The data come from the RNA Mapping Database (RMDB), library M2RFPK. The record gives the reactivity of an RNA of 207 nucleotides to 2A3 and DMS. For DMS, 2,226 sequencing reads were counted. The reactions ran in a buffer of 150 mM KOAc, 10 mM MgCl2 and 150 mM bicine (pH 8.5), at 24 C. DMS adducts were read by reverse transcription with MarathonRT.

RNA sequence: GGGAACGACUCGAGUAGAGUCGAAAAGCCUCCUCGCUUCCAUAGAAAGGGGACGGGGCAGAUCGCAAGUGCUACAACCGAGCGGUGGUAUCUGUCCAACUAAGCAGCCACUGCACAUCAAUUGACUAAACGAUGCCGAUCUUCGGAUCGGCAUCAAUCUUGUACCUAACUUCGGUUAGGUACAAGAAAAAGAAACAACAACAACAAC
Reactivity to 2A3 in 0.01 (KOAc 150mM, MgCl2 10mM, bicine 150mM(pH8.5), 24C), signal-to-noise 1, nucleotides 027 to 156: g090c000c010u000c000c000u010c020g010c100u100u030c080c020a140u130a190g170a130a110a050g000g010g000g010a020c060g010g000g050g010c020a010g020a000u010c000g000c040a020a020g010u000g020c000u130a130c080a070a080c050c100g110a040g020c000g000g000u000g000g000u030a020u020c000u050g070u080c100c030a030a040c070u050a050a050g000c000a000g020c000c000a000c000u010g110c090a030c020a150u260c070a110a180u160u220g050a100c040u220a050a110a030c140g000a000u000g000c000c010g000a000u010c000u040u110c210g080g000a010u000c000g000g010c000a000u000c000a000a010
Reactivity to DMS in 0.01 (KOAc 150mM, MgCl2 10mM, bicine 150mM(pH8.5), 24C), signal-to-noise 1, nucleotides 027 to 156: g010c000c010u020c010c020u010c040g030c020u000u000c060c110a120u010a080g020a080a110a120g010g000g000g020a000c030g030g000g020g020c110a040g010a030u000c040g040c050a080a040g020u010g010c030u000a070c100a090a130c110c060g010a110g020c000g010g000u040g000g000u000a030u000c030u000g000u000c000c080a080a130c130u000a070a100g010c000a130g000c000c010a050c000u000g040c040a110c080a180u000c140a010a200u010u000g000a190c130u000a050a120a110c090g000a030u000g000c000c000g010a030u000c010u000u020c300g040g000a000u000c000g020g000c010a000u000c010a010a030